[RMDB]
RNA sequence: GGGAACGACUCGAGUAGAGUCGAAAAUCCUAAGUCUUCACGGGAGGUUCAGGUGGGAUGAUGACCCAGGUCGGAAACGACCUGGCAAGUCCCUCUGAACCAUCGAUCGUGAAGAUAUGGAAAAAUGAUCCAUCUUGGUUCGCCAAGAUGGAUCAAAGAACCGUUGUAAGUUCGCUUACAACGGUUCAAAAGAAACAACAACAACAAC
Reactivity to 2A3 in 0.01 (KOAc 150mM, MgCl2 10mM, bicine 150mM(pH8.5), 24C), signal-to-noise 1, nucleotides 027 to 156: u000c000c000u020a060a040g020u000c000u000u000c000a000c000g010g010g000a060g040g010u000u010c030a030g150g160u160g130g030g000a030u050g030a110u100g020a030c030c030c000a000g010g010u040c000g040g000a000a090a080c030g000a000c000c010u030g000g020c010a050a050g010u010c000c000c000u000c030u050g020a020a000c000c000a000u000c000g020a040u030c010g000u000g000a000a000g000a000u010a010u020g000g040a040a100a090a000a040u100g000a000u010c000c000a000u000c000u010u000g000g000u050u050c230g060c090c000a000a000g000a000u000g000g000a000u000c010a000a010a000
An RNA of 207 nucleotides, treated with 2A3 and read out base by base. The RNA was probed in 150 mM KOAc, 10 mM MgCl2 and 150 mM bicine (pH 8.5) at 24 C. For 2A3 the reverse transcriptase was SuperScript II with manganese.